[RMDB]
RNA sequence: GGGAACGACUCGAGUAGAGUCGAAAACAGAGCUGAUGGGCUAUGUACCUAUCCAAAAUGAGAUCCCAUCUUGCACACUGUGCUAAUUUGAGAUUCUCAUGCCUCCUACUUGGAGAGAUCUGGACUACUAACUGUAUGACGUUCGCGUCAUACAGAAGGGUUAUUUAUAGUUCGCUAUAAAUAACCCAAAAGAAACAACAACAACAAC
Reactivity to 2A3 in 0.01 (KOAc 150mM, MgCl2 10mM, bicine 150mM(pH8.5), 24C), signal-to-noise 9, nucleotides 027 to 156: c010a010g030a010g030c080u090g030a030u040g030g030g000c060u120a120u290g080u150a130c000c010u010a030u030c030c040a040a040a050a070u020g000a010g000a020u020c000c000c000a000u010c020u010u030g000c010a030c040a080c160u270g010u010g010c050u140a050a060u010u010u040g040a040g000a030u260u040c000u000c010a010u040g020c010c000u010c010c010u150a300c120u130u230g000g000a010g000a010g000a030u010c020u040g010g040a050c040u070a040c020u050a270a090c000u020g000u000a000u000g000a010c000g010u030u030c150g010c000g100u010c000a000u000a000c000a000g000a010a020
Reactivity to DMS in 0.01 (KOAc 150mM, MgCl2 10mM, bicine 150mM(pH8.5), 24C), signal-to-noise 4, nucleotides 027 to 156: c020a050g000a070g010c020u000g020a050u010g020g020g030c060u010a120u010g030u000a030c010c010u000a040u000c010c050a070a030a140a050u000g010a030g000a080u000c000c000c000a040u000c090u000u020g000c000a020c010a230c120u020g030u010g010c020u020a020a040u010u000u000g010a030g000a060u000u000c000u010c010a020u000g000c030c000u000c000c010u000a130c150u010u010g020g010a060g020a080g000a050u000c010u000g000g010a150c080u000a130c300u010a080a260c000u000g020u000a000u000g000a020c000g030u000u010c300g010c030g010u000c000a000u000a000c000a000g010a030a100

The record gives the reactivity of an RNA of 207 nucleotides to 2A3 and DMS. The reactions ran in a buffer of 150 mM KOAc, 10 mM MgCl2 and 150 mM bicine (pH 8.5), at 24 C. High DMS reactivity at an A or C suggests that its Watson-Crick edge is free. 2A3 adducts were read by reverse transcription with SuperScript II with manganese. The 2A3 profile rests on 14,960 reads. The DMS profile rests on 8,481 reads.